[RMDB]
RNA sequence: GGGAACGACUCGAGUAGAGUCGAAAACAGGCUGGAUUACAUCAUUAGUAACUUGAGCAGAAGUAAACAGAACAAGAAGUACUGCGGUUAUUCAAGUUCAAAGUUCACACUAUCGCAAUAAAUAUAACACCCAAACACAAUUCGUUGUGUUUGGGUGAAAAGAAACAACAACAACAAC
Reactivity to 2A3 in 0.01 (KOAc 150mM, MgCl2 10mM, bicine 150mM(pH8.5), 24C), signal-to-noise 2, nucleotides 027 to 126: c020a010g100g020c010u030g000g050a060u010u050a060c010a080u090c030a030u080u060a050g030u050a060a070c000u020u040g100a000g000c000a030g000a190a010g080u090a060a040a020c010a030g030a040a020c030a070a040g120a100a010g000u040a010c000u010g050c040g060g020u070u020a040u070u050c010a050a020g000u020u000c050a110a080a000g040u050u100c000a000c010a000c070u060a060u160c020g060c110a040a120u080a130a170a000u240a030u080a150a060
Reactivity to DMS in 0.01 (KOAc 150mM, MgCl2 10mM, bicine 150mM(pH8.5), 24C), signal-to-noise 1, nucleotides 027 to 126: c060a080g000g020c020u000g000g000a060u000u000a030c060a100u000c110a070u000u000a110g020u000a130a010c070u000u000g000a100g000c010a150g030a050a080g010u020a060a110a030c100a070g050a060a050c020a100a230g000a040a020g000u020a010c040u010g020c040g030g010u000u000a030u020u010c060a030a160g000u000u000c040a080a050a130g000u000u000c040a040c090a020c090u010a070u010c010g010c060a010a040u020a020a060a020u010a030u010a110a200